Chemical mapping of a 177-nucleotide RNA with 2A3 and DMS.
For 2A3 the reverse transcriptase was SuperScript II with manganese.
It was measured as part of the RMDB library OK1LIB.
The reactions ran in a buffer of 150 mM KOAc, 10 mM MgCl2 and 150 mM bicine (pH 8.5), at 24 C.
For DMS, 24,307 sequencing reads were counted.
For 2A3, 23,307 sequencing reads were counted.
DMS adducts were read by reverse transcription with MarathonRT.

[RMDB]
RNA sequence: GGGAACGACUCGAGUAGAGUCGAAAAGGUGGCUCGUUGUGUGCUCACGACUCUGCAGAGUACGAGUCACCGAUUUAGCAUGUUCGUCCUACGUAACUCGGUGGGGACCUGUAGGACGUUCAUGCGAGGGAAGGAGUACCUUCGGGUAUUCCUUCCCAAAAGAAACAACAACAACAAC
Reactivity to 2A3 in 0.01 (KOAc 150mM, MgCl2 10mM, bicine 150mM(pH8.5), 24C), signal-to-noise 9, nucleotides 027 to 126: g020g000u010g000g000c000u000c020g030u050u160g140u060g050u070g170c030u060c020a090c050g190a130c070u090c100u270g050c070a040g010a010g070u070a010c010g000a000g000u000c000a000c000c000g000a000u000u010u030a010g000c000a000u000g010u000u000c000g000u000c000c000u000a010c010g060u070a120a130c040u040c100g170g080u280g080g090g020g070a060c020c020u070g000u000a000g000g000a000c000g000u000u000c000a000u000g000c000g000a090
Reactivity to DMS in 0.01 (KOAc 150mM, MgCl2 10mM, bicine 150mM(pH8.5), 24C), signal-to-noise 6, nucleotides 027 to 126: g010g010u000g000g000c000u000c010g010u000u020g010u020g010u010g000c040u010c070a120c110g000a110c100u010c060u030g010c110a110g000a060g010u010a020c000g000a020g010u000c000a010c000c000g020a000u020u020u030a140g010c010a000u000g010u000u000c000g000u010c010c000u010a010c010g010u020a150a160c070u000c040g020g010u020g010g000g000g010a080c240c160u060g010u000a010g010g010a020c010g000u000u010c000a010u000g000c010g010a100